[RMDB]
RNA sequence: GGGAACGACUCGAGUAGAGUCGAAAACAACAAAACAAAACAUAGGGGAGUCAGGGUUCGGAACACCUGCCGGAACCUAGGGUAACACUGACUGUGGAGGGGAAAAGAAAGAAAACAAAACAAAACACGCUAUAUCACUCUUCGGAGUGAUAUAGCGAAAAGAAACAACAACAACAAC
Reactivity to DMS in 0.01 (KOAc 150mM, MgCl2 10mM, bicine 150mM(pH8.5), 24C), signal-to-noise 1, nucleotides 027 to 126: c040a240a060c190a090a000a100a040c190a220a250a080a100c170a030u000a180g040g000g000g000a110g000u030c000a010g000g170g000u100u000c000g050g110a000a030c000a080c290c260u000g000c000c000g000g000a170a000c120c080u050a030g000g000g000u000a000a170c080a150c110u000g090a000c170u000g020u060g000g000a040g000g000g030g050a000a010a060a190g000a070a020a130g000a050a110a000a170c290a020a040a000a000c070a170a030a070a140c300a040
Reactivity to 2A3 in 0.01 (KOAc 150mM, MgCl2 10mM, bicine 150mM(pH8.5), 24C), signal-to-noise 2, nucleotides 027 to 126: c080a020a000c010a000a080a060a030c050a020a230a000a000c060a050u110a020g000g000g010g000a010g100u040c090a050g000g000g110u060u060c020g050g010a110a030c080a080c110c010u020g000c000c020g010g020a020a000c000c000u000a020g030g000g010u020a060a000c010a020c200u070g120a010c040u000g020u100g220g040a130g070g020g000g000a040a030a040a030g110a040a090a000g150a000a060a020a000c120a150a020a000a000c080a070a040a020a000c040a020